[RMDB]
The data come from the RNA Mapping Database (RMDB), library 15KLIB. This 170-nucleotide RNA was probed chemically with DMS and 2A3.
RNA sequence: GGGAACGACUCGAGUAGAGUCGAAAAAUGGGCCGCUUCCGGCAGGGAAGCCCGAAGGUGGGAGAGGGGGAGAACACUUCGAGAGUUGGGGGAUAGAAAGAGGGCGAAUUUCCUCGGGAGGAUCCCCGUGCGGGUGGGUUCGCCCACCCGAAAAGAAACAACAACAACAAC
Reactivity to DMS in 0.01 (KOAc 150mM, MgCl2 10mM, bicine 150mM(pH8.5), 24C), signal-to-noise 2, nucleotides 027 to 129: a080u050g000g000g000c050c040g000c110u020u040c030c110g000g000c150a080g050g010g000a000a000g010c000c000c000g030a020a050g020g010u030g030g030g010a000g000a080g000g000g000g000g000a020g040a060a090c040a120c080u000u070c050g030a000g010a120g010u000u060g000g170g000g010g000a150u010a060g040a000a000a000g020a110g020g000g020c130g040a080a030u020u070u000c010c010u020c000g000g050g010a140g020g010a070u010c120c010c010c020g030u030g010
Reactivity to 2A3 in 0.01 (KOAc 150mM, MgCl2 10mM, bicine 150mM(pH8.5), 24C), signal-to-noise 2, nucleotides 027 to 129: a020u050g000g000g080c020c020g000c000u060u000c000c030g020g060c040a000g010g010g150a030a000g010c000c000c020g010a020a040g180g040u080g000g000g000a070g010a020g010g000g010g000g000a010g000a010a010c030a000c030u070u110c020g080a040g020a010g150u030u040g010g050g000g000g000a010u000a080g080a000a030a000g060a100g030g000g000c030g070a060a080u120u040u020c000c020u000c000g040g000g000a030g050g010a040u050c060c020c000c010g050u060g050

Values cover nucleotides 27 to 129. For 2A3, 3,364 sequencing reads were counted. 2A3 adducts were read by reverse transcription with SuperScript II with manganese. DMS adducts were read by reverse transcription with MarathonRT.